Chemical mapping of a 177-nucleotide RNA with DMS and 2A3. DMS adducts were read by reverse transcription with MarathonRT. The DMS profile rests on 21,080 reads. Reactivities are given for positions 27 through 126. 2A3 adducts were read by reverse transcription with SuperScript II with manganese. The data come from the RNA Mapping Database (RMDB), library OK2TST. The RNA was probed in 150 mM KOAc, 10 mM MgCl2 and 150 mM bicine (pH 8.5) at 24 C.
RNA sequence: GGGAACGACUCGAGUAGAGUCGAAAAAGCAUGUGUGUACUCACUAGCCAUGCGAUCUCAGCAGUACUCGUACCAUGCAUGGCAGUGCUCUAGACUAGCCAUGGCUCAUGUCGCGUACCGUACCACAGUGAAGUAUCAUUUUCGAAUGAUACUUCACAAAAGAAACAACAACAACAAC
Reactivity to DMS in 0.01 (KOAc 150mM, MgCl2 10mM, bicine 150mM(pH8.5), 24C), signal-to-noise 9, nucleotides 027 to 126: a130g010c050a030u010g010u010g030u000g010u000a050c080u000c060a050c050u000a150g000c020c010a010u000g000c010g000a090u000c040u000c110a120g010c110a050g010u000a050c020u000c080g010u000a080c130c070a080u000g010c050a030u000g000g010c030a030g010u000g010c120u000c150u000a090g000a060c030u000a120g020c040c010a030u000g000g000c100u010c100a050u000g010u000c040g020c150g010u000a050c030c040g010u000a090c080c080a090c240a100
Reactivity to 2A3 in 0.01 (KOAc 150mM, MgCl2 10mM, bicine 150mM(pH8.5), 24C), signal-to-noise 9, nucleotides 027 to 126: a000g050c050a040u040g130u020g010u020g030u130a050c020u030c080a050c050u050a020g000c010c000a010u010g000c010g060a110u030c040u010c050a070g020c020a010g020u020a020c010u030c070g030u040a060c040c040a050u110g010c030a040u020g040g000c010a000g010u030g050c020u050c050u110a120g030a080c010u030a040g010c020c010a040u050g060g000c040u040c060a040u090g030u050c020g010c020g030u020a040c010c020g030u050a060c000c050a070c060a080